[RMDB]
RNA sequence: GGGAACGACUCGAGUAGAGUCGAAAAAAGAGUCCACACGUGGCCAGUCAGGGGAAAGGUCUGGACGUUCAGGGUCUUUCCUCUACCAGGUGAGCACUCAUGAACAGUCUGAGUCCGCCCAUGGACGUACGGAAAGUGUAUUCGUACACUUUCCGUAAAAAGAAACAACAACAACAAC
Reactivity to DMS in 0.01 (KOAc 150mM, MgCl2 10mM, bicine 150mM(pH8.5), 24C), signal-to-noise 4, nucleotides 027 to 126: a100a100g010a100g010u000c040c040a070c020a050c060g020u000g000g010c140c130a130g010u010c210a020g000g000g000g020a030a040a030g010g000u000c000u010g010g000a100c130g020u000u000c040a160g010g000g000u000c000u000u000u000c000c000u020c030u000a050c070c050a040g000g010u000g000a070g020c230a020c000u000c010a090u000g010a040a080c130a090g000u000c050u010g000a090g000u000c000c060g010c010c020c020a110u010g010g010a020c040g010
Reactivity to 2A3 in 0.01 (KOAc 150mM, MgCl2 10mM, bicine 150mM(pH8.5), 24C), signal-to-noise 2, nucleotides 027 to 126: a000a000g030a010g020u020c020c010a000c000a000c090g230u060g030g020c110c070a090g070u190c110a020g000g010g000g000a000a000a040g050g000u020c020u030g050g100a080c080g020u080u080c050a010g070g000g000u020c020u000u000u040c000c000u040c000u000a010c010c000a030g000g060u020g000a020g000c060a010c000u030c010a100u100g060a070a040c040a100g140u050c030u060g030a010g020u040c030c010g010c000c030c000a000u010g030g010a000c040g000